[RMDB]
RNA sequence: GGGAACGACUCGAGUAGAGUCGAAAAGAGGUUGUCAUUUUGAAGGUUAACUCUCAGAGAAGACUUCACUUCACGUUAGAAAACGAAGUGGAGUAUAGCACGACUGACAACAUCGACCAAACAUUAAGUCUUCUCAAAAAAGGGCAAGAGGUAAUCCAGGGGAUGUACUAUUCGUAGUACAUCCCCUAAAAGAAACAACAACAACAAC
Reactivity to 2A3 in 0.01 (KOAc 150mM, MgCl2 10mM, bicine 150mM(pH8.5), 24C), signal-to-noise 2, nucleotides 027 to 156: g070a060g020g010u010u000g000u020c040a070u000u070u150u300g130a090a060g030g000u040u160a080a080c000u020c020u040c120a000g000a000g070a050a000g030a000c000u000u000c030a000c000u000u040c050a070c180g100u040u070a170g180a160a200a000a000c050g010a070a000g000u000g000g000a000g040u000a030u070a000g040c010a010c120g100a030c040u070g010a000c000a030a000c000a010u010c010g020a020c000c050a100a070a000c110a040u140u140a020a050g010u030c000u000u000c000u000c000a130a120a030a020a000a010g080g010g000c040a030a000g000a000g030g010u020a040a030u040c020c010
Reactivity to DMS in 0.01 (KOAc 150mM, MgCl2 10mM, bicine 150mM(pH8.5), 24C), signal-to-noise 1, nucleotides 027 to 156: g000a100g030g010u010u000g000u000c020a290u000u000u000u010g000a090a000g000g040u000u000a090a040c020u000c000u000c010a220g010a060g020a090a030g000a040c010u000u000c020a020c040u000u000c000a100c050g000u000u010a200g000a100a120a160a110c060g010a000a010g010u000g020g000a050g030u000a060u000a090g000c050a040c050g010a090c050u010g000a100c020a060a000c080a300u000c010g000a090c050c020a130a030a120c090a090u000u010a060a040g000u000c000u000u010c000u020c020a000a050a050a160a080a060g000g010g040c090a030a030g020a060g010g000u000a030a110u000c030c170